[RMDB]
RNA sequence: GGGAACGACUCGAGUAGAGUCGAAAAUGUAGUCGGCUGGUGGAAAGUUUUGUGCCGGAAACGCGUCCAGCGUGCCAAUAUAAAUGUCACGCACGGCGUCACUUUUACUGGCCCCCACGGUCGUUAAACGUUAUACUUCGUUCGCGAAGUAUAACGUAAAAGAAACAACAACAACAAC
Reactivity to DMS in 0.01 (KOAc 150mM, MgCl2 10mM, bicine 150mM(pH8.5), 24C), signal-to-noise 3, nucleotides 027 to 126: u000g020u010a100g020u000c050g010g000c000u000g010g010u010g020g010a110a080a120g020u000u010u010u010g040u010g040c000c010g020g000a040a050a070c290g000c030g010u010c020c100a300g010c000g020u000g000c050c010a020a060u000a140u030a060a150a110u000g010u000c020a010c000g010c000a110c280g010g000c010g000u000c130a050c110u000u010u000u010a100c020u000g000g000c010c020c090c000c010a070c040g000g000u000c010g010u000u010a030a120
Reactivity to 2A3 in 0.01 (KOAc 150mM, MgCl2 10mM, bicine 150mM(pH8.5), 24C), signal-to-noise 1, nucleotides 027 to 126: u160g020u060a090g110u090c030g000g040c030u140g240g060u040g030g060a160a100a090g080u080u100u210u180g080u160g000c000c010g000g010a050a030a000c050g000c010g020u010c020c020a010g000c000g000u000g000c000c020a060a010u170a010u060a150a160a110u090g000u020c000a000c010g000c010a020c050g010g010c000g030u050c020a050c000u060u120u030u140a200c020u040g000g000c000c010c030c000c000a010c000g000g010u040c050g020u030u130a090a120